[RMDB]
This 177-nucleotide RNA was probed chemically with DMS.
Conditions: 150 mM KOAc, 10 mM MgCl2 and 150 mM bicine (pH 8.5), 24 C.
Reactivities are given for positions 27 through 126.

RNA sequence: GGGAACGACUCGAGUAGAGUCGAAAAUUUACGGGCCCGGGAGGAGGACCGAAUACACGCGCGCGAGGUCCUCCAGGUAGUACGAACGCGCGCGUGUAUAAUAGUACUACCACCCGGGCCCACCGAACUGAUAGUAGUAUUUCGAUACUACUAUCAGAAAAGAAACAACAACAACAAC
Reactivity to DMS in 0.01 (KOAc 150mM, MgCl2 10mM, bicine 150mM(pH8.5), 24C), signal-to-noise 3, nucleotides 027 to 126: u000u010u010a140c060g010g010g040c010c010c010g030g010g020a050g010g010a060g000g000a010c010c020g010a300a060u000a020c020a000c010g000c010g000c010g010c010g000a160g020g000u000c060c010u000c030c150a040g030g020u010a010g010u000a020c000g010a150a190c040g000c000g000c000g000c000g000u000g000u000a010u000a020a120u010a080g010u000a010c010u000a100c010c000a080c000c000c000g000g000g010c010c000c000a000c010c020g000a080a170